RNA sequence: GGGAACGACUCGAGUAGAGUCGAAAACAAUUGAGCGUCGCACACACACAGACUAAGUCUGACACUGACAGAGCCUAAACCGGUCUGUCAGUGUGCGAGAUAUCGUUCUUAAUGUGAGCAGAGGAAAGCAAUCUGCUAUCUUCGGAUAGCAGAUUGCAAAAGAAACAACAACAACAAC
Reactivity to DMS in 0.01 (KOAc 150mM, MgCl2 10mM, bicine 150mM(pH8.5), 24C), signal-to-noise 2, nucleotides 027 to 126: c020a140a130u010u040g010a030g010c080g050u000c020g020c020a140c020a030c110a010c110a180c240a000g000a020c040u000a080a190g010u010c010u000g000a020c010a000c060u010g000a000c000a010g000a070g000c010c000u000a070a020a140c270c300g000g000u000c010u000g010u000c010a020g000u000g000u010g000c040g000a000g000a060u040a210u000c070g000u010u000c000u010u000a180a050u000g000u000g000a090g010c070a010g000a060g030g010a020a090a050
Reactivity to 2A3 in 0.01 (KOAc 150mM, MgCl2 10mM, bicine 150mM(pH8.5), 24C), signal-to-noise 2, nucleotides 027 to 126: c050a050a140u040u210g030a040g060c050g100u030c020g020c000a030c000a020c000a000c000a000c020a030g030a010c040u150a240a000g020u000c020u020g030a000c010a000c030u000g000a000c040a010g030a050g140c000c010u070a090a080a030c090c030g030g050u020c000u010g010u000c000a000g000u000g000u010g000c040g020a000g040a000u100a030u070c070g040u140u030c000u010u090a140a110u090g030u020g050a020g000c070a040g020a060g000g100a090a100a000